[RMDB]
Annotation:
An RNA of 170 nucleotides, treated with 2A3 and DMS and read out base by base. The reactions ran in a buffer of 150 mM KOAc, 10 mM MgCl2 and 150 mM bicine (pH 8.5), at 24 C. It was measured as part of the RMDB library 15KLIB. For 2A3 the reverse transcriptase was SuperScript II with manganese.
RNA sequence: GGGAACGACUCGAGUAGAGUCGAAAACCCUAACUACACAAUUAAGGGUUCCUUUCUGUGUGGUUCUUGUGGUAGUGUUGGUUACACCAAGGAGGGUAGUGUGAUCAAUUUCUGUUACAUGCAUCAAAUACAUCAAGCUUCGGCUUGAUGAAAAGAAACAACAACAACAAC
Reactivity to 2A3 in 0.01 (KOAc 150mM, MgCl2 10mM, bicine 150mM(pH8.5), 24C), signal-to-noise 9, nucleotides 027 to 129: c000c000c000u000a010a010c010u020a000c010a010c010a060a300u120u080a050a040g100g140g090u230u300c010c000u030u030u010c030u000g010u000g000u000g000g000u010u030c020u020u040g000u010g020g010u020a010g000u000g010u020u000g010g010u010u010a010c010a010c020c040a110a110g200g050a090g050g140g030u160a070g010u010g000u000g010a000u010c000a000a010u080u240u050c000u000g010u000u010a010c010a020u040g130c010a080u090c070a070a110a040u240a070
Reactivity to DMS in 0.01 (KOAc 150mM, MgCl2 10mM, bicine 150mM(pH8.5), 24C), signal-to-noise 5, nucleotides 027 to 129: c000c020c010u000a010a000c050u000a040c040a060c030a050a120u070u040a030a020g070g000g050u110u190c000c000u020u030u020c090u040g000u000g020u010g000g040u000u000c070u000u000g020u000g020g030u000a000g010u050g040u000u030g000g000u000u030a030c060a000c000c000a110a090g110g040a060g030g060g020u040a060g030u000g010u030g020a000u020c040a000a000u050u080u040c000u000g020u030u050a000c040a040u060g090c100a050u090c130a060a100a070u160a070